[RMDB]
RNA sequence: GGGAACGACUCGAGUAGAGUCGAAAAUCACUCCAUGAGGCUCAUUGCGUUUCUCAGCCUGAAGGGCACCUCUCUUCUGUUUUCUCUGCAAGUGGGCAGCAAGUGCUCCAACUCUGGGAUAGAGUGCUGGACGUAUUACUUUCGAGUAAUACGUCCAAAAAGAAACAACAACAACAAC
Reactivity to DMS in 0.01 (KOAc 150mM, MgCl2 10mM, bicine 150mM(pH8.5), 24C), signal-to-noise 3, nucleotides 027 to 126: u000c070a110c050u000c030c050a120u010g040a120g010g000c030u000c080a050u000u010g020c110g020u000u000u010c040u010c020a120g000c040c030u010g020a100a120g020g010g010c080a080c060c040u000c030u010c020u000u000c030u000g010u000u000u010u000c030u000c040u000g000c050a070a070g010u010g010g000g000c040a030g020c130a060a080g020u000g010c020u000c050c060a120a080c030u000c010u010g010g010g010a090u020a070g000a040g020u000g000c190
Reactivity to 2A3 in 0.01 (KOAc 150mM, MgCl2 10mM, bicine 150mM(pH8.5), 24C), signal-to-noise 1, nucleotides 027 to 126: u120c020a040c020u040c040c020a110u130g050a070g100g000c010u020c070a030u040u190g050c000g050u010u070u000c030u020c020a030g000c000c020u020g050a070a030g000g030g000c020a050c020c010u020c000u050c030u090u000c000u040g040u050u020u100u010c030u020c020u050g020c020a040a140g030u100g060g020g000c000a020g000c040a150a100g150u020g040c000u030c020c030a040a080c000u030c000u070g130g010g020a020u050a070g040a000g000u060g040c060